[RMDB]
RNA sequence: GGGAACGACUCGAGUAGAGUCGAAAACAUCCCAGUGGAGAUGUUGAGGCUUGUAUGGUUCAGGUUACCUGCGGUAGCAUGACUCUUAAUGGUCUUUGGCUUGACAACACAGUCUGGUGCCCACGACAACGCUGCCAGUUCGCUGGCAGCAAAAGAAACAACAACAACAAC
Reactivity to DMS in 0.01 (KOAc 150mM, MgCl2 10mM, bicine 150mM(pH8.5), 24C), signal-to-noise 6, nucleotides 027 to 129: c130a110u040c010c000c020a000g010u030g050g000a090g020a060u020g020u010u040g040a060g000g100c080u000u010g060u020a040u090g070g030u000u020c090a000g010g050u040u020a000c110c010u020g010c180g030g030u000a020g020c080a070u000g020a050c020u020c140u030u030a160a090u080g020g030u010c080u070u030u000g000g000c070u030u040g020a090c110a090a050c170a090c040a080g000u020c020u030g000g040u000g000c090c010c050a140c100g050a080c100a100a100c080
Reactivity to 2A3 in 0.01 (KOAc 150mM, MgCl2 10mM, bicine 150mM(pH8.5), 24C), signal-to-noise 3, nucleotides 027 to 129: c060a090u050c000c000c000a020g070u130g090g120a170g000a100u050g020u170u110g000a040g000g000c050u020u030g050u110a120u060g040g000u140u060c030a000g070g000u000u050a030c010c010u050g050c040g020g000u020a000g010c020a020u100g000a000c010u000c000u170u070a090a040u170g020g000u000c000u030u040u010g080g000c000u000u000g000a050c000a030a030c020a000c010a050g040u030c010u000g010g070u020g010c000c040c010a060c010g110a010c020a110a020c050